[RMDB]
RNA sequence: GGGAACGACUCGAGUAGAGUCGAAAAAGUGCGAGAAGGUUCUCCUGUUCGACCCGACGGUACCUUCAGUGGUUAGUCCGCGGAAGUAUGCCGCAUCUACGACGGACCACUCAGAUCGGUCGUUACGGCUUUCGAUCUCAUUCGUGAGAUCGAAAGCAAAAGAAACAACAACAACAAC
Reactivity to 2A3 in 0.01 (KOAc 150mM, MgCl2 10mM, bicine 150mM(pH8.5), 24C), signal-to-noise 2, nucleotides 027 to 126: a000g130u130g020c040g000a010g030a030a100g120g020u120u000c030u010c050c020u080g040u060u060c000g020a040c020c070c030g040a030c030g020g010u060a090c000c000u040u040c020a000g000u010g030g050u020u030a020g010u000c060c090g000c040g030g040a210a100g130u130a100u300g110c000c000g040c010a060u090c050u160a040c120g000a000c030g040g000a010c010c000a000c000u020c000a030g010a190u070c030g010g100u040c010g020u060u060a040c010g080
Reactivity to DMS in 0.01 (KOAc 150mM, MgCl2 10mM, bicine 150mM(pH8.5), 24C), signal-to-noise 3, nucleotides 027 to 126: a110g010u010g020c060g000a060g020a030a070g000g010u050u000c080u000c010c020u000g010u010u000c100g010a090c030c040c040g010a080c050g000g020u000a050c160c010u000u010c060a040g010u000g020g020u010u000a130g020u010c020c260g020c010g000g010a090a110g010u010a090u010g020c010c000g000c030a110u010c150u020a080c230g010a040c020g000g010a020c020c010a030c040u010c130a110g020a110u010c040g010g020u000c000g010u010u000a050c090g000
Background:
The record gives the reactivity of an RNA of 177 nucleotides to 2A3 and DMS. For DMS the reverse transcriptase was MarathonRT. The RNA was probed in 150 mM KOAc, 10 mM MgCl2 and 150 mM bicine (pH 8.5) at 24 C. The DMS profile rests on 2,550 reads.